Structure probing data (DMS and 2A3) for a 207-nucleotide construct.
DMS (dimethyl sulfate) methylates the pairing face of unpaired adenines and cytosines.
Reactivities are rounded to 0.1 and cut off at 0 and 3.
The data come from the RNA Mapping Database (RMDB), library OK3TST.
The RNA was probed in 150 mM KOAc, 10 mM MgCl2 and 150 mM bicine (pH 8.5) at 24 C.

[RMDB]
RNA sequence: GGGAACGACUCGAGUAGAGUCGAAAAAACAACACUGCCUUUGAACUUGAUACAACAGACGUAUCCCAUCUGUCUAACCUCCUGAAACACCUCAAGAACAACAAUGAAACACCUAAAUCACUCUCUGACUACCUCCCAGUAGCACCAGUAACACAGCCAAUUUACUCGAAUUCGUUCGAGUAAAUUGAAAAGAAACAACAACAACAAC
Reactivity to DMS in 0.01 (KOAc 150mM, MgCl2 10mM, bicine 150mM(pH8.5), 24C), signal-to-noise 4, nucleotides 027 to 156: a050a060c050a090a080c050a070c030u010g010c020c020u000u000u010g020a070a110c060u010u000g000a160u000a080c060a060a040c030a030g000a040c040g030u000a160u000c040c020c010a110u000c020u000g000u000c020u010a090a080c060c010u010c010c010u000g010a120a050a060c060a070c020c020u000c030a050a110g020a070a070c030a060a060c060a040a080u010g000a130a050a070c030a050c040c010u010a040a040a070u010c040a050c060u000c040u000c020u010g010a100c040u000a060c030c020u010c010c020c010a190g010u000a070g020c040a030c040c010a050g020u000a050a080c070a050c030a100g020c080
Reactivity to 2A3 in 0.01 (KOAc 150mM, MgCl2 10mM, bicine 150mM(pH8.5), 24C), signal-to-noise 8, nucleotides 027 to 156: a000a000c060a010a010c030a020c040u050g020c020c000u060u040u050g050a080a050c030u050u070g040a030u100a110c060a070a020c030a090g050a030c040g040u050a090u040c000c010c010a030u010c010u020g030u000c010u010a050a080c010c020u040c010c010u030g050a060a060a020c030a040c020c020u050c050a050a040g060a050a010c030a030a030c010a030a110u100g040a080a040a000c040a040c020c020u050a060a090a060u070c030a040c030u060c010u010c020u020g070a140c010u070a050c010c010u010c000c010c000a000g010u010a000g000c010a020c050c000a020g040u040a060a010c080a010c020a070g030c020